[RMDB]
RNA sequence: GGGAACGACUCGAGUAGAGUCGAAAAGAAGCAUGCGGGAGGGAACUGGGAGCCUUGGGAGUGUCCGGGAGGGAGGGACGACGCUCGGACCUACGGGAGGUUGUAGGGAAGGGUGUUAGCAUGCGAACCCAUAUGUAAUCUUCGGAUUACAUAUGGGAAAAGAAACAACAACAACAAC
Reactivity to DMS in 0.01 (KOAc 150mM, MgCl2 10mM, bicine 150mM(pH8.5), 24C), signal-to-noise 3, nucleotides 027 to 126: g000a150a150g000c030a000u010g000c010g000g000g000a170g030g000g000a070a090c130u010g010g000g000a160g010c040c050u000u050g010g010g000a120g000u040g020u030c040c020g000g000g030a100g000g000g000a130g000g010g000a210c070g000a030c020g010c010u010c000g010g010a270c010c030u000a030c020g000g000g010a130g030g010u050u020g000u010a040g000g000g010a180a190g000g000g000u000g000u000u000a060g020c000a000u010g010c000g010a070a050
Reactivity to 2A3 in 0.01 (KOAc 150mM, MgCl2 10mM, bicine 150mM(pH8.5), 24C), signal-to-noise 9, nucleotides 027 to 126: g130a050a010g000c010a010u010g000c010g010g050g070a160g040g060g020a090a080c070u100g050g010g070a060g050c020c030u080u060g060g010g020a160g060u150g060u050c020c010g020g020g020a200g040g030g040a180g040g000g010a010c090g000a010c010g030c020u020c010g020g090a050c000c010u030a030c010g070g020g030a140g110g020u200u170g020u060a020g010g000g040a060a060g020g000g000u030g010u030u010a010g000c010a010u010g000c010g010a030a060